[RMDB]
RNA sequence: GGGAACGACUCGAGUAGAGUCGAAAAUCGAGAACGAACACUCGUUCACGUGUACUCACGUUCGAGUACGUGUGAUCGAACUCACUCUCACGUUCUCACGUACACGUGUUCGUUCACGAGUGAGAGUUCGAGUGUUCACUCGAACGUUCGAACACGAGCCGGUCUCAGGGUUCGCCCUGAGACCGGCAAAAGAAACAACAACAACAAC
Reactivity to 2A3 in 0.01 (KOAc 150mM, MgCl2 10mM, bicine 150mM(pH8.5), 24C), signal-to-noise 1, nucleotides 027 to 156: u030c050g010a000g030a030a060c060g030a010a020c040a000c020u030c010g010u050u050c020a000c020g010u000g030u000a070c010u050c050a070c110g260u200u280c250g000a000g000u000a000c010g060u040g000u000g000a010u050c050g020a100a070c000u000c010a040c000u020c000u030c050a050c040g030u060u010c050u070c050a030c050g140u120a010c120a010c110g000u010g030u090u080c010g010u110u090c070a010c120g000a050g010u030g000a030g020a040g070u090u040c030g010a010g040u050g010u030u000c020a010c000u010c010g020a040a060c040g030u070u030c010g000a030a010c000a000c020g010a030
The record gives the reactivity of an RNA of 207 nucleotides to 2A3. The 2A3 profile rests on 914 reads. The reactions ran in a buffer of 150 mM KOAc, 10 mM MgCl2 and 150 mM bicine (pH 8.5), at 24 C. It was measured as part of the RMDB library OK3TST.